The record gives the reactivity of an RNA of 177 nucleotides to DMS. The reactions ran in a buffer of 150 mM KOAc, 10 mM MgCl2 and 150 mM bicine (pH 8.5), at 24 C. The data come from the RNA Mapping Database (RMDB), library TTRINS.

[RMDB]
RNA sequence: GGGAACGACUCGAGUAGAGUCGAAAAGAUAUGGAUAGCCAUGACUCUCUAUGUCGAGCAACAGCCGUUCGGUCGGAAACGACCGACGGACAUGCUCGGCAUAGAGAGUCAUGGCUAUCCUAAGUCAUCGUAGUAUAUGGUUCGCCAUAUACUACGAAAAAGAAACAACAACAACAAC
Reactivity to DMS in 0.01 (KOAc 150mM, MgCl2 10mM, bicine 150mM(pH8.5), 24C), signal-to-noise 1, nucleotides 027 to 126: g000a040u000a300u010g000g020a020u010a000g010c030c000a010u020g000a010c000u000c000u000c020u000a010u010g000u000c020g010a030g000c030a040a100c300a230g000c000c000g010u000u010c020g010g020u020c010g040g000a120a130a250c010g020a020c000c000g000a000c030g000g000a010c090a070u000g000c000u000c000g020g000c000a000u000a030g000a000g000a000g000u010c010a000u000g000g000c000u000a000u000c000c000u000a000a060g000u000c030a100